[RMDB]
RNA sequence: GGGAACGACUCGAGUAGAGUCGAAAAUGCCAGGUCCUCCUCUUACCACUGUUUGCUGAAUGCCACAAGGUCCUGGCUCCAGCCACAUUCUAUGCCAUCUGCCAGCAGGACAGUUGCCACCAGGAGCACACCCAUUAAUAUUCGUAUUAAUGGGUGUAAAAGAAACAACAACAACAAC
Reactivity to 2A3 in 0.01 (KOAc 150mM, MgCl2 10mM, bicine 150mM(pH8.5), 24C), signal-to-noise 8, nucleotides 027 to 126: u100g010c000c000a010g020g020u030c010c000u020c020c010u050c040u070u110a080c030c020a050c080u060g040u130u110u100g040c030u050g110a170a080u120g020c030c010a060c020a070a020g020g000u010c010c010u010g010g000c000u000c000c000a000g020c010c010a050c000a050u090u040c030u080a070u130g020c000c010a050u020c030u050g030c020c000a030g010c020a020g030g030a020c010a030g020u050u040g040c010c010a040c010c010a030g020g070a010g020c030
Reactivity to DMS in 0.01 (KOAc 150mM, MgCl2 10mM, bicine 150mM(pH8.5), 24C), signal-to-noise 9, nucleotides 027 to 126: u010g010c020c010a040g010g000u000c030c010u000c060c040u000c080u000u010a110c080c060a100c120u000g010u000u010u000g020c040u010g010a090a080u000g010c030c130a060c120a090a070g010g010u000c020c020u000g010g010c010u000c040c030a080g010c050c080a060c080a080u000u000c070u010a070u000g010c020c030a060u000c060u000g010c050c040a070g010c050a050g010g000a050c060a060g010u000u000g010c040c020a090c050c040a080g010g000a100g020c150

Notes:
The data come from the RNA Mapping Database (RMDB), library OK2TST. This 177-nucleotide RNA was probed chemically with 2A3 and DMS. The RNA was probed in 150 mM KOAc, 10 mM MgCl2 and 150 mM bicine (pH 8.5) at 24 C. For DMS the reverse transcriptase was MarathonRT. The 2A3 profile rests on 24,545 reads.